The data come from the RNA Mapping Database (RMDB), library OK1LIB.
Chemical mapping of a 177-nucleotide RNA with DMS and 2A3.
DMS adducts were read by reverse transcription with MarathonRT.

[RMDB]
RNA sequence: GGGAACGACUCGAGUAGAGUCGAAAACGUCGUACUUGGUUACAUAGCUUCUUCUAAGGGAUAUGAGACAACGACGAAAGUUUAGUGUUCCUUGUAUGCGAGGAGGCUGAUGUACACUCAAUCGCAAGGGUAAAUCUAACUUCGGUUAGAUUUACCCAAAAGAAACAACAACAACAAC
Reactivity to DMS in 0.01 (KOAc 150mM, MgCl2 10mM, bicine 150mM(pH8.5), 24C), signal-to-noise 2, nucleotides 027 to 126: c060g000u030c010g040u040a000c160u000u030g000g020u000u010a010c030a030u000a080g000c000u000u000c020u000u020c020u050a080a080g000g000g000a000u000a040u000g000a130g000a050c020a030a190c220g040a010c300g000a050a040a160g000u000u000u000a300g040u000g000u000u000c020c000u010u000g030u030a040u020g040c230g000a020g030g000a000g000g000c000u000g000a000u000g000u000a020c260a080c030u080c090a020a070u020c160g020c160a100a070
Reactivity to 2A3 in 0.01 (KOAc 150mM, MgCl2 10mM, bicine 150mM(pH8.5), 24C), signal-to-noise 3, nucleotides 027 to 126: c100g090u130c040g070u100a110c130u090u130g030g020u030u030a000c000a030u000a000g040c000u000u020c000u030u000c000u050a020a080g030g010g000a030u020a020u100g060a060g040a020c080a100a010c130g270a010c020g020a140a080a050g020u020u120u170a070g000u010g010u030u070c020c000u000u020g140u170a140u200g120c090g000a010g070g010a000g060g000c020u010g120a010u030g030u100a040c060a020c090u230c070a020a110u120c030g000c150a090a140